[RMDB]
RNA sequence: GGGAACGACUCGAGUAGAGUCGAAAAGUCAUUUUUGAUAGUGUAGCCUUGCGUUUGACAAGCGUUGAGGUGAAAUAAAGUCUUAGCCUUGCUUUUGAGUUUUGGAAGAUGAGCGAAGUAGGGUGAAGUAGUCAUCUUUGCUAAGCAUGUAGAGGUCGUGUAUUUAAUGCUUCGGCAUUAAAUACACAAAAGAAACAACAACAACAAC
Reactivity to DMS in 0.01 (KOAc 150mM, MgCl2 10mM, bicine 150mM(pH8.5), 24C), signal-to-noise 3, nucleotides 027 to 156: g020u010c020a060u000u000u010u000u000g010a070u000a030g010u000g020u000a260g010c010c010u000u000g000c020g010u000u000u000g020a040c070a270a300g020c020g000u000u010g050a010g030g050u000g010a040a050a120u000a060a090a120g000u000c010u010u000a090g010c010c010u000u010g010c010u010u010u000u010g010a110g020u000u010u000u000g010g010a080a130g020a060u000g000a050g010c050g000a050a040g030u000a030g000g010g040u000g010a060a080g040u000a070g010u000c010a060u000c030u000u010u000g000c040u000a090a130g010c040a070u000g000u000a070g020a120g010g030u000c050
Reactivity to 2A3 in 0.01 (KOAc 150mM, MgCl2 10mM, bicine 150mM(pH8.5), 24C), signal-to-noise 7, nucleotides 027 to 156: g040u030c040a100u030u070u110u180u190g130a120u140a100g100u080g020u060a010g000c000c000u000u010g000c000g060u050u020u030g040a030c030a010a020g000c020g020u060u300g020a000g000g020u050g030a020a020a020u180a040a140a010g020u000c000u080u210a010g000c000c010u020u020g010c020u010u050u140u210g120a060g030u030u060u100u090g060g010a020a010g010a030u030g010a000g040c020g010a020a010g010u040a030g010g000g020u020g020a010a010g030u060a020g020u010c010a010u010c000u020u020u030g040c040u050a030a040g020c020a040u070g010u080a030g020a020g070g020u080c050
Conditions: 150 mM KOAc, 10 mM MgCl2 and 150 mM bicine (pH 8.5), 24 C. The record gives the reactivity of an RNA of 207 nucleotides to DMS and 2A3. Reactivities are given for positions 27 through 156.